[RMDB]
Chemical mapping of a 207-nucleotide RNA with DMS and 2A3.
Values cover nucleotides 27 to 156.

RNA sequence: GGGAACGACUCGAGUAGAGUCGAAAAGGCAUGUCGAGGACCCGUCACCUCGUUAAUCAAUGGGAAAAACGUAACUGCAAACGACGAUACGUUCGCACUGGCAGCCUAAGGGCCGCCGUCCUCUGCCUAGUUCACUGACGGGCUAGUGUCGCAAGACGAGUUAAGUUUACUUCGGUAAACUUAACUCAAAAGAAACAACAACAACAAC
Reactivity to DMS in 0.01 (KOAc 150mM, MgCl2 10mM, bicine 150mM(pH8.5), 24C), signal-to-noise 3, nucleotides 027 to 156: g030g030c030a060u010g010u020c040g000a050g020g000a060c000c010c010g000u000c020a170c030c010u000c020g030u000u020a060a120u000c090a080a140u000g000g020g010a070a050a090a070a070c030g010u060a090a120c070u010g010c030a080a040a070c050g040a110c020g010a240u010a110c020g020u000u010c010g030c030a050c080u000g030g030c010a000g010c220c020u000a130a180g090g020g010c010c020g030c040c020g010u010c040c020u000c060u010g020c020c020u000a070g020u000u000c070a140c070u000g000a030c030g000g030g010c030u010a040g020u000g030u000c040g000c040a140a140g000a170c180
Reactivity to 2A3 in 0.01 (KOAc 150mM, MgCl2 10mM, bicine 150mM(pH8.5), 24C), signal-to-noise 7, nucleotides 027 to 156: g080g000c070a050u100g040u170c020g010a000g000g000a020c010c000c000g000u010c020a020c000c000u010c010g060u030u050a050a050u080c070a020a070u100g010g030g000a100a060a010a000a000c030g040u090a060a030c040u090g040c110a080a080a060c070g110a020c040g050a080u050a080c030g040u020u050c030g010c040a030c070u070g010g000c010a020g010c010c010u050a110a180g050g010g000c010c020g020c010c010g030u020c000c020u040c030u020g000c000c010u020a050g040u070u080c060a050c180u080g030a030c040g000g000g000c000u040a040g010u020g050u120c020g000c080a080a030g030a030c060
Description
The 2A3 profile rests on 8,908 reads. DMS adducts were read by reverse transcription with MarathonRT.